An RNA of 177 nucleotides, treated with DMS and 2A3 and read out base by base. 2A3 adducts were read by reverse transcription with SuperScript II with manganese. The RNA was probed in 150 mM KOAc, 10 mM MgCl2 and 150 mM bicine (pH 8.5) at 24 C.
RNA sequence: GGGAACGACUCGAGUAGAGUCGAAAACCCGUUUUGUUCGCAAAACGGGACUCAUCUUUGCUUGGCAGCAUAGCAGGUGUUGGCUGGACUGCUGGGUUAUCCUUGGAGGCAGUUUCGACUGCCUCAAAAUCACUAUUUGGUUCGCCAAAUAGUGAUUAAAAGAAACAACAACAACAAC
Reactivity to DMS in 0.01 (KOAc 150mM, MgCl2 10mM, bicine 150mM(pH8.5), 24C), signal-to-noise 8, nucleotides 027 to 126: c010c000c000g010u000u000u000u000g010u000u010c190g030c010a010a010a010a010c000g010g000g010a090c100u000c130a100u000c090u000u000u000g000c010u000u000g000g020c040a020g010c120a100u010a040g010c030a080g010g020u010g020u010u010g010g000c010u000g000g000a150c020u000g000c010u000g000g000g010u000u000a060u000c030c030u000u010g030g010a020g000g010c000a010g010u000u000u010c170g010a030c000u000g000c000c010u000c000a010a020
Reactivity to 2A3 in 0.01 (KOAc 150mM, MgCl2 10mM, bicine 150mM(pH8.5), 24C), signal-to-noise 4, nucleotides 027 to 126: c000c010c000g000u010u010u000u000g020u020u040c190g020c100a000a000a000a000c000g000g000g020a040c020u020c060a160u040c040u040u080u090g030c020u030u020g040g000c000a010g000c020a070u060a070g000c040a070g060g180u170g100u300u190g170g000c020u020g020g020a100c010u000g000c010u010g000g000g010u030u100a080u130c030c020u010u140g200g000a010g010g010c000a000g000u020u010u110c090g050a030c010u000g000c000c000u000c000a010a000